Annotation
An RNA of 177 nucleotides, treated with 2A3 and read out base by base. For 2A3, 560 sequencing reads were counted. Values cover nucleotides 27 to 126. The reactions ran in a buffer of 150 mM KOAc, 10 mM MgCl2 and 150 mM bicine (pH 8.5), at 24 C.
RNA sequence: GGGAACGACUCGAGUAGAGUCGAAAAGCUGGCACGUUCGCGUGCCAGCAAAGCACCCUGUCCCGGGUAGGGAACCAAAUAAAAUAUAACUAACAAAAUAAAAAAGUGCACACUUCGGUGUGCACAAGAUAUCUAUCCAGUUCGCUGGAUAGAUAUCAAAAGAAACAACAACAACAAC
Reactivity to 2A3 in 0.01 (KOAc 150mM, MgCl2 10mM, bicine 150mM(pH8.5), 24C), signal-to-noise 1, nucleotides 027 to 126: g030c000u000g000g000c090a010c060g080u060u100c250g090c000g030u010g000c000c020a050g000c020a010a020a000g050c010a000c030c000c030u030g010u030c020c000c020g110g030g110u190a070g000g000g010a060a020c030c020a040a180a000u180a080a170a120a000u300a100u030a070a100c010u140a120a130c060a100a220a230a070u300a180a220a020a100a050a020g000u000g000c010a000c000a000c000u040u060c190g130g000u000g010u000g000c000a000c000a000a000